[RMDB]
RNA sequence: GGGAACGACUCGAGUAGAGUCGAAAAGGAGCCACAUAUUAAAUUCCCCCGAUACCAUUAACUAUGGAUAAUUUGUCCCUAGUUAAAAGCUGUUGACCACAAGGUGGGAAGGAAUUGACUCUGUGCAUGCAGCUGAAAAAGUCCAAAUCUAAACCCAAAUUGACAGUUGAUUCGUCAACUGUCAAUUAAAAGAAACAACAACAACAAC
Reactivity to 2A3 in 0.01 (KOAc 150mM, MgCl2 10mM, bicine 150mM(pH8.5), 24C), signal-to-noise 3, nucleotides 027 to 156: g050g030a020g020c070c060a060c070a070u300a120u140u300a090a120a160u070u020c010c000c040c010c000g030a050u050a180c010c010a070u020u020a000a000c000u020a010u020g010g000a000u000a040a260u250u040u300g010u020c000c000c000u010a010g000u010u000a040a060a000a000g000c040u050g020u100u070g050a060c020c050a040c100a110a020g080g000u060g020g080g020a040a070g080g020a030a070u060u150g030a050c020u000c020u090g040u050g000c030a030u030g000c010a020g000c020u100g080a050a140a000a000a000g020u030c050c030a020a020a090u050c040u130a050a090a070c030c020c030a020
Reactivity to DMS in 0.01 (KOAc 150mM, MgCl2 10mM, bicine 150mM(pH8.5), 24C), signal-to-noise 2, nucleotides 027 to 156: g000g010a100g010c030c050a030c090a080u020a130u000u000a040a130a300u000u000c000c000c010c030c010g020a080u000a040c060c020a220u000u000a010a020c000u000a030u000g010g010a030u000a100a230u000u000u000g020u000c000c000c020u000a020g000u000u000a020a050a090a140g020c020u000g010u000u020g000a100c060c050a060c050a050a090g000g050u010g010g000g020a110a090g010g000a090a070u000u010g000a050c040u000c050u000g020u000g030c000a110u000g020c020a060g030c010u010g000a020a060a060a060a080g020u000c020c040a020a070a090u000c040u000a040a060a230c020c000c020a060
The data come from the RNA Mapping Database (RMDB), library OK3TST. Chemical mapping of a 207-nucleotide RNA with 2A3 and DMS. The reactions ran in a buffer of 150 mM KOAc, 10 mM MgCl2 and 150 mM bicine (pH 8.5), at 24 C. DMS adducts were read by reverse transcription with MarathonRT.